[RMDB]
RNA sequence: GGGAACGACUCGAGUAGAGUCGAAAAGACCGUCACGGCCAUUGAACGGGCAGAGCAGGAAAAAAAUGCGCUGGCGCAGGCCGACGGAAACGACGCUGACGACUGGCGCACGGCCUUUCGUGCAGCCCGCGUAUCUCGAAUUCGUUCGAGAUACGCGAAAAGAAACAACAACAACAAC
Reactivity to 2A3 in 0.01 (KOAc 150mM, MgCl2 10mM, bicine 150mM(pH8.5), 24C), signal-to-noise 2, nucleotides 027 to 126: g040a010c000c010g020u040c030a080c220g000g020c020c010a100u100u260g070a180a040c080g030g060g050c020a000g010a020g000c020a020g000g300a040a120a030a000a020a030a070u030g030c050g030c010u030g110g050c040g000c070a030g000g040c020c000g010a010c000g000g000a050a090a010c060g090a000c070g000c020u000g000a010c000g050a020c020u010g000g000c010g030c060a070c120g170g030c000c000u030u060u020c040g020u130g090c020a000g000c000c020
Reactivity to DMS in 0.01 (KOAc 150mM, MgCl2 10mM, bicine 150mM(pH8.5), 24C), signal-to-noise 2, nucleotides 027 to 126: g020a090c000c000g010u010c080a180c120g040g000c020c030a190u000u030g010a110a130c070g020g020g040c030a030g010a030g010c010a070g000g000a010a020a020a080a090a090a120u000g000c000g000c010u000g000g020c050g010c060a100g010g010c030c000g020a030c060g020g000a070a060a080c070g010a110c170g010c000u000g010a060c010g040a040c030u000g020g020c010g030c110a060c120g000g000c080c010u010u000u000c000g020u000g000c030a030g020c000c080